[RMDB]
RNA sequence: GGGAACGACUCGAGUAGAGUCGAAAAAGAUUCAGGAUGUGUAAUUAAUUGGAAAGGUAGAGAACUCAAAUGUGGAAGCGGCAUUUUUGUCACCAAUGAAGUUCACACUUGGACAGAGCAAUACAAACCAAGGCUCUCUGUUCGCAGAGAGCCUUGGAAAAGAAACAACAACAACAAC
Reactivity to 2A3 in 0.01 (KOAc 150mM, MgCl2 10mM, bicine 150mM(pH8.5), 24C), signal-to-noise 1, nucleotides 027 to 126: a000g040a040u040u010c040a020g000g120a300u000g010u000g060u090a070a180u020u010a000a000u240u000g130g000a300a040a000g040g140u170a030g090a000g000a010a030c000u080c000a060a060a060u010g010u010g180g030a250a000g070c040g090g000c030a070u000u000u000u000u120g050u120c000a010c010c000a010a000u060g000a000a000g030u010u010c000a000c070a000c100u000u000g040g000a000c010a010g000a000g030c060a220a000u090a190c000a210a100a030